[RMDB]
RNA sequence: GGGAACGACUCGAGUAGAGUCGAAAACGGAACUAAACUCGUGGUUCCUGUGGUUCACACCUGACCUCCUGAGCAGAAAAAGAAAAAAGAAGGCGGGUUCGCUCCAGGUUUCCCCGGGGAUAUCCCCUCACAGUCAUAGAUUCGUCUAUGACUGUGAAAAAGAAACAACAACAACAAC
Reactivity to 2A3 in 0.01 (KOAc 150mM, MgCl2 10mM, bicine 150mM(pH8.5), 24C), signal-to-noise 2, nucleotides 027 to 126: c020g030g050a040a010c070u080a190a070a030c030u030c070g030u030g010g050u020u020c020c000u000g050u010g030g000u100u120c060a030c010a020c120c000u120g240a300c030c010u000c000c000u050g030a030g070c070a100g260a090a230a050a030a030g210a070a210a000a010a050a000g010a010a020g010g000c030g010g000g000u030u080c040g010c020u010c020c010a020g020g000u000u020u020c010c030c040c000g040g000g000g000a030u060a120u180c000c000c010c000
Reactivity to DMS in 0.01 (KOAc 150mM, MgCl2 10mM, bicine 150mM(pH8.5), 24C), signal-to-noise 2, nucleotides 027 to 126: c170g010g020a050a010c050u010a040a040a140c070u010c080g020u000g010g010u000u000c000c000u010g010u010g000g000u000u010c100a080c090a110c060c030u000g010a130c030c060u000c010c040u000g000a140g030c100a110g010a050a100a110a090a120g000a040a060a070a140a100a100g010a050a040g020g020c030g000g000g010u000u000c110g000c040u000c090c060a020g000g000u000u000u000c030c030c030c050g030g000g000g000a200u010a080u000c020c000c000c110